Conditions: 150 mM KOAc, 10 mM MgCl2 and 150 mM bicine (pH 8.5), 24 C. Chemical mapping of a 207-nucleotide RNA with 2A3.

[RMDB]
RNA sequence: GGGAACGACUCGAGUAGAGUCGAAAAUGACGCCUAUCACUGGAUGAAGCAUAUUAUACAAAAUGGUUUUGUAGGCAACCUUAAUAUGUAUAGUCUUGUCUUUAUCGUUACACGAUAAUCAAUUUAUAAAACAGCUCCCCCUUCGGGGGGAGCUGAACAUGAGCUAAUGGUUCGCCAUUAGCUCAUGAAAAGAAACAACAACAACAAC
Reactivity to 2A3 in 0.01 (KOAc 150mM, MgCl2 10mM, bicine 150mM(pH8.5), 24C), signal-to-noise 1, nucleotides 027 to 156: u160g070a050c070g000c000c000u030a030u030c060a020c160u060g030g000a020u040g000a030a040g010c000a000u000a000u050u030a030u030a050c100a050a120a020a200u150g000g000u040u040u010u020g000u000a010g000g010c020a000a000c000c000u000u050a010a040u000a020u000g020u010a010u000a010g000u010c000u050u060g070u000c110u030u100u000a000u010c000g020u010u130a140c160a010c100g010a030u030a030a030u160c040a080a130u030u250u260a300u300a120a090a060a010c010a010g000c000u000c040c000c000c000c060u000u030c100g000g000g000g000g040g000a000g000c000u000g000a000a000